[RMDB]
Structure probing data (DMS and 2A3) for a 177-nucleotide construct. For 2A3, 1,636 sequencing reads were counted. Values cover nucleotides 27 to 126. The RNA was probed in 150 mM KOAc, 10 mM MgCl2 and 150 mM bicine (pH 8.5) at 24 C. Source: RMDB library RFM100, as collected in RNAgym.

RNA sequence: GGGAACGACUCGAGUAGAGUCGAAAAAGCGGACUACGGUCCGCACGUGUGAGCCCGCCCUGUGCCCGGCCCACUUCUGCUUCCUCUUAGCGCAGGAGGGGUCCCGCACUGGGAGGGGCCCUCACAAACUGACACCGUGUUUCGACACGGUGUCAGUAAAAGAAACAACAACAACAAC
Reactivity to DMS in 0.01 (KOAc 150mM, MgCl2 10mM, bicine 150mM(pH8.5), 24C), signal-to-noise 1, nucleotides 027 to 126: a130g010c000g010g020a000c000u000a170c120g050g000u000c050c030g000c050a040c080g000u000g000u020g000a010g010c000c000c030g080c000c000c000u000g040u020g010c040c070c300g000g000c000c040c000a130c000u010u030c000u000g000c010u000u050c100c160u000c110u110u000a180g000c300g000c000a000g000g000a000g000g170g000g000u000c040c060c300g000c000a000c020u000g000g000g000a020g000g040g000g000c000c060c000u000c000a000c020a110a010
Reactivity to 2A3 in 0.01 (KOAc 150mM, MgCl2 10mM, bicine 150mM(pH8.5), 24C), signal-to-noise 2, nucleotides 027 to 126: a010g010c000g000g000a000c000u000a010c260g080g000u000c000c020g040c000a000c050g070u030g000u020g020a020g050c000c000c000g020c010c000c000u010g000u000g000c010c030c060g000g000c020c010c020a300c000u000u010c000u000g040c020u190u090c070c100u150c100u200u170a040g060c020g000c100a000g000g020a000g010g020g000g020u030c000c000c000g000c000a010c010u040g000g000g000a050g010g000g000g010c030c000c040u020c000a000c000a010a080